[RMDB]
RNA sequence: GGGAACGACUCGAGUAGAGUCGAAAAGACGAUCACACUAAUAUCAGAAAGGCUUUCUGUUGUGAUUACAGGACACCCAGGAGGUUUGAGAGGAAAGUACGUAGACGGCCAGACGUACUCAAAGGAAGGCGAUUAUAAUAUUCGUAUUAUAAUCGCCAAAAGAAACAACAACAACAAC
Reactivity to 2A3 in 0.01 (KOAc 150mM, MgCl2 10mM, bicine 150mM(pH8.5), 24C), signal-to-noise 3, nucleotides 027 to 126: g080a020c080g000a030u050c000a010c000a010c060u160a130a120u140a070u270c030a050g130a050a130a050g180g010c020u000u080u030c020u000g070u120u050g000u070g000a030u010u070a030c030a060g000g070a020c020a060c050c020c030a020g020g090a030g080g070u100u100u140g100a050g000a020g020g120a090a000a040g010u010a000c050g000u000a010g050a080c010g040g000c000c010a020g000a040c000g000u020a000c020u020c090a080a070a000g100g020a080a080
Reactivity to DMS in 0.01 (KOAc 150mM, MgCl2 10mM, bicine 150mM(pH8.5), 24C), signal-to-noise 5, nucleotides 027 to 126: g000a100c080g010a030u010c010a010c010a100c300u020a110a080u060a070u020c050a060g000a050a070a090g010g000c120u000u020u000c010u010g000u000u000g000u000g000a030u010u010a070c130a090g010g000a070c200a060c020c020c030a100g000g010a140g000g000u010u010u020g000a070g000a130g020g000a110a090a040g000u000a010c030g010u000a020g010a080c120g010g000c010c030a130g000a030c040g000u000a000c020u000c110a040a070a100g000g010a130a160